[RMDB]
RNA sequence: GGGAACGACUCGAGUAGAGUCGAAAACGGCCUCUGAGACGAGCGAUGGACAGUAGAGCUCGUCUCUACCAGUCGCGUGCUGACUCUCACGCCCACCCGCACGGCUGCUCCGAGGGAGGAGCUCUCUGCCGCUAGUCGAGCGGACUUCAGAGUGACUACAGCUGUGAUAGUUCGCUAUCACAGCUGUAAAAGAAACAACAACAACAAC
Reactivity to 2A3 in 0.01 (KOAc 150mM, MgCl2 10mM, bicine 150mM(pH8.5), 24C), signal-to-noise 1, nucleotides 027 to 156: c030g000g000c010c020u000c000u010g000a000g000a000c000g010a020g110c010g010a050u090g010g010a000c020a020g010u030a000g020a000g080c070u180c150g230u050c000u020c000u030a000c000c000a000g000u010c050g000c010g000u010g040c150u010g020a000c000u000c000u000c000a000c130g000c000c000c000a020c000c020c000g070c010a110c110g070g080c030u130g030c000u070c050c090g120a180g110g100g000a070g020g010a030g000c000u000c000u000c020u030g050c020c060g000c030u070a060g270u300c070g090a010g010c000g060g000a060c010u080u100c110a020g000a000g000u080g080a020c120u000

This 207-nucleotide RNA was probed chemically with 2A3. It was measured as part of the RMDB library VIROID. Values cover nucleotides 27 to 156. The reactions ran in a buffer of 150 mM KOAc, 10 mM MgCl2 and 150 mM bicine (pH 8.5), at 24 C.